[RMDB]
RNA sequence: GGGAACGACUCGAGUAGAGUCGAAAAGAUAUGGACGUGAGAGACAUGCUUUUCGGAAACGAGGAAGCAACAGCUCUACACGUCCUAAGUCAAAAUCUCCCAGUGGACUUCGGUCCACUGGGAGAAACACUUCCAACAAGUUCGCUUGUUGGAAGUGAAAAGAAACAACAACAACAAC
Reactivity to DMS in 0.01 (KOAc 150mM, MgCl2 10mM, bicine 150mM(pH8.5), 24C), signal-to-noise 2, nucleotides 027 to 126: g010a010u000a300u010g000g000a010c000g060u000g000a100g030a020g000a060c090a210u010g000c000u010u000u010u000c000g010g000a020a060a100c000g000a030g000g000a000a020g000c010a020a030c260a160g010c000u000c000u000a200c010a000c010g010u000c000c000u000a010a050g000u010c030a100a090a060a130u000c000u000c000c000c000a000g020u000g000g010a020c010u000u000c250g020g030u000c000c000a000c020u000g010g020g000a000g000a000a020a080
Reactivity to 2A3 in 0.01 (KOAc 150mM, MgCl2 10mM, bicine 150mM(pH8.5), 24C), signal-to-noise 1, nucleotides 027 to 126: g020a040u020a050u130g000g000a000c010g000u000g000a060g000a000g040a110c010a120u030g010c040u000u060u000u010c000g030g000a020a000a050c020g020a030g040g120a000a000g000c020a030a050c080a140g030c010u040c000u190a300c020a010c010g000u020c000c000u000a000a000g000u010c000a000a040a030a300u000c000u000c000c020c000a000g020u000g000g000a000c000u040u120c300g090g000u000c000c000a000c000u000g000g040g000a000g000a010a010a000